[RMDB]
RNA sequence: GGGAACGACUCGAGUAGAGUCGAAAAGCCUAGAGUCUGAAAAGGUUUCUUGGUCUUGUCUGGGUACCAGCACUAUGGUUUCCAUGAUGUCUUUUCUGUACAUCGUUUGUAAAUUUAGCGUAGAGGACAACUAUAGGAGCUUCGGCUCCUAUAGUUGAAAAGAAACAACAACAACAAC
Reactivity to DMS in 0.01 (KOAc 150mM, MgCl2 10mM, bicine 150mM(pH8.5), 24C), signal-to-noise 2, nucleotides 027 to 126: g010c000c010u000a050g020a070g010u010c050u010g010a050a050a110a050g000g000u010u000u010c010u000u000g000g010u000c040u000u000g000u010c030u000g010g010g020u010a090c040c020a070g020c160a060c090u000a050u000g000g010u000u000u000c060c040a050u010g000a030u000g000u010c020u010u000u000u010c120u000g010u020a040c010a040u000c030g000u000u000u010g010u010a040a070a080u010u020u010a060g020c060g020u010a070g020a110g000g000a210
Reactivity to 2A3 in 0.01 (KOAc 150mM, MgCl2 10mM, bicine 150mM(pH8.5), 24C), signal-to-noise 1, nucleotides 027 to 126: g000c000c000u000a050g030a010g050u050c040u010g060a020a040a030a040g050g000u040u160u000c010u030u050g030g030u030c020u090u080g060u090c040u050g050g000g000u120a160c010c020a020g000c030a010c070u090a100u140g100g000u000u070u080c020c010a030u080g020a040u010g080u030c020u000u080u100u040c040u010g100u040a010c010a080u070c050g040u070u130u070g140u100a180a270a260u160u160u120a050g000c030g010u070a050g020a040g140g080a040
About this RNA: This 177-nucleotide RNA was probed chemically with DMS and 2A3. The RNA was probed in 150 mM KOAc, 10 mM MgCl2 and 150 mM bicine (pH 8.5) at 24 C. The 2A3 profile rests on 998 reads. For DMS the reverse transcriptase was MarathonRT. Reactivities are given for positions 27 through 126.